[RMDB]
RNA sequence: GGGAACGACUCGAGUAGAGUCGAAAAAUGGGAGUGGGAAAACGCAGGGAGUACCUUCGUUCGUGGCUCUUUUGGUGUGACUGUAGUCGAUGCCUUAGCGACAGAAACGGCUCAUCUGUCAGUGAGCCCUCCCGAGUGGUUUCGACCACUCGGGAGGAAAAGAAACAACAACAACAAC
Reactivity to DMS in 0.01 (KOAc 150mM, MgCl2 10mM, bicine 150mM(pH8.5), 24C), signal-to-noise 1, nucleotides 027 to 126: a090u010g020g000g030a070g010u120g020g000g000a080a030a060a040c070g000c030a060g000g000g000a200g000u000a160c000c080u000u020c050g000u020u000c040g000u030g000g030c010u000c080u000u000u100u030g000g000u000g020u000g000a040c050u080g020u000a100g050u000c000g000a120u010g000c080c000u000u020a070g000c000g000a050c030a050g010a040a020a060c060g000g040c000u000c030a110u000c060u070g000u000c130a120g020u030g000a040g000c070
Reactivity to 2A3 in 0.01 (KOAc 150mM, MgCl2 10mM, bicine 150mM(pH8.5), 24C), signal-to-noise 2, nucleotides 027 to 126: a110u110g030g000g000a060g070u100g010g020g030a090a140a000a000c060g000c040a050g040g020g050a160g080u130a080c010c000u000u050c040g040u000u130c060g000u030g030g000c000u000c000u000u120u040u140g090g000u060g050u050g060a020c010u030g060u070a030g000u080c060g060a070u070g020c010c000u000u100a000g020c000g010a000c010a050g070a040a140a030c050g030g030c000u000c000a020u000c040u040g090u010c020a050g010u010g090a000g000c010
Description
This 177-nucleotide RNA was probed chemically with DMS and 2A3. The RNA was probed in 150 mM KOAc, 10 mM MgCl2 and 150 mM bicine (pH 8.5) at 24 C. For DMS, 1,671 sequencing reads were counted.